[RMDB]
RNA sequence: GGGAACGACUCGAGUAGAGUCGAAAACCGUUGCCGUUCGCGGCAACGGGAAGCAAGCAAGCAGCGCUACGAGACAAGACGAUAAUGAGAUCGCGCAUGCUGAAAAGCCACGCUUCGGCGUGGCUAAAGUAUGAUCGGGUUUCGACCCGAUCAUACUAAAAGAAACAACAACAACAAC
Reactivity to DMS in 0.01 (KOAc 150mM, MgCl2 10mM, bicine 150mM(pH8.5), 24C), signal-to-noise 2, nucleotides 027 to 126: c000c000g010u000u010g000c020c010g010u010u020c140g010c020g000g010c020a000a000c010g000g000g000a040a080g040c100a090a140g000c160a090a030g010c030a050g000c040g000c060u000a070c120g000a090g020a130c100a100a070g040a110c070g010a100u000a150a090u000g010a140g000a080u000c120g000c110g040c020a070u000g000c020u000g000a080a060a110a030g000c020c010a000c000g000c000u000u010c140g020g020c010g020u000g000g020c000u000a000a010
Reactivity to 2A3 in 0.01 (KOAc 150mM, MgCl2 10mM, bicine 150mM(pH8.5), 24C), signal-to-noise 1, nucleotides 027 to 126: c030c010g000u000u020g010c030c000g000u100u060c210g010c020g090g010c010a010a020c020g010g000g010a010a000g070c040a110a020g010c040a040a000g000c060a000g030c030g000c010u100a050c030g060a010g050a050c040a100a060g130a060c070g080a100u100a250a140u250g080a020g020a110u110c000g000c020g050c030a090u000g010c020u050g040a090a130a000a000g060c000c000a010c000g000c000u000u150c300g070g000c000g000u000g050g000c000u000a000a000